RNA sequence: GGGAACGACUCGAGUAGAGUCGAAAAGAUAUGGAUAUACUAGUACCUACUAGGACGUUGAAAUCGGAAACGAUGGAGUCCAUAGGGACCGUAUAUCCUAAGUCAAAGCUAGUGUUCGCACUAGCAAGUCGGUAUUCAAGUUCGCUUGAAUACCGACAAAAGAAACAACAACAACAAC
Reactivity to DMS in 0.01 (KOAc 150mM, MgCl2 10mM, bicine 150mM(pH8.5), 24C), signal-to-noise 2, nucleotides 027 to 126: g020a030u000a300u000g010g000a010u000a020u010a010c010u040a080g030u000a160c030c010u000a020c300u000a120g040g020a000c000g000u010u000g000a140a250a020u010c010g000g000a140a080a200c030g010a070u010g000g000a070g000u000c000c000a200u010a000g000g020g010a100c300c190g000u010a010u000a000u000c000c000u010a030a090g000u000c050a060a140a080g000c000u000a000g040u000g000u010u000c240g000c020a030c000u010a010g010c000a020a040
Reactivity to 2A3 in 0.01 (KOAc 150mM, MgCl2 10mM, bicine 150mM(pH8.5), 24C), signal-to-noise 2, nucleotides 027 to 126: g010a020u080a030u180g000g020a000u000a010u010a020c020u040a040g010u010a000c010c000u050a100c120u120a220g020g010a020c030g200u300u070g000a010a020a020u010c020g020g020a100a020a020c000g000a010u010g020g040a020g010u000c000c000a010u000a010g000g000g000a000c020c000g000u020a000u000a000u000c010c000u010a080a020g020u000c030a000a080a060g000c010u010a010g000u010g050u130u080c300g080c130a000c000u000a000g000c000a000a000

Chemical mapping of a 177-nucleotide RNA with DMS and 2A3. The data come from the RNA Mapping Database (RMDB), library TTRDEL. DMS adducts were read by reverse transcription with MarathonRT. For DMS, 1,078 sequencing reads were counted. The reactions ran in a buffer of 150 mM KOAc, 10 mM MgCl2 and 150 mM bicine (pH 8.5), at 24 C.